[RMDB]
RNA sequence: GGGAACGACUCGAGUAGAGUCGAAAAGCGUCUCAGUCUGCGGAGCCACUCGGUGUUCUCCGUGACGAACGUGUCGGUUGUGAGCAGCGGCGGUGGCAUUGUGCUUGGAGAGCGCCUCGCGGUGGUAUAUCCCUCGGUGAUUCGUCACCGAGGGAUAAAAAGAAACAACAACAACAAC
Reactivity to 2A3 in 0.01 (KOAc 150mM, MgCl2 10mM, bicine 150mM(pH8.5), 24C), signal-to-noise 1, nucleotides 027 to 126: g040c030g070u050c040u020c090a040g080u000c040u120g000c030g000g040a030g010c020c000a050c010u250c080g160g000u010g020u140u100c010u000c000c000g000u020g010a020c010g000a060a010c040g040u030g070u090c050g080g080u130u130g040u140g090a150g110c120a010g010c050g070g010c060g050g000u000g000g000c040a070u050u230g080u070g000c060u010u120g070g010a080g000a000g010c000g040c000c010u000c000g090c040g000g030u090g000g020u100a080
Reactivity to DMS in 0.01 (KOAc 150mM, MgCl2 10mM, bicine 150mM(pH8.5), 24C), signal-to-noise 2, nucleotides 027 to 126: g020c100g000u000c080u010c030a110g000u000c000u010g020c000g000g010a060g040c300c020a020c020u010c120g040g020u000g010u000u010c000u000c000c020g000u000g000a020c010g010a050a050c080g020u000g000u010c040g010g000u000u010g010u010g000a110g010c130a080g000c060g000g020c050g010g020u010g010g000c060a110u000u000g010u000g020c000u010u010g020g010a050g020a110g010c030g000c020c010u000c110g050c060g020g020u000g010g010u000a160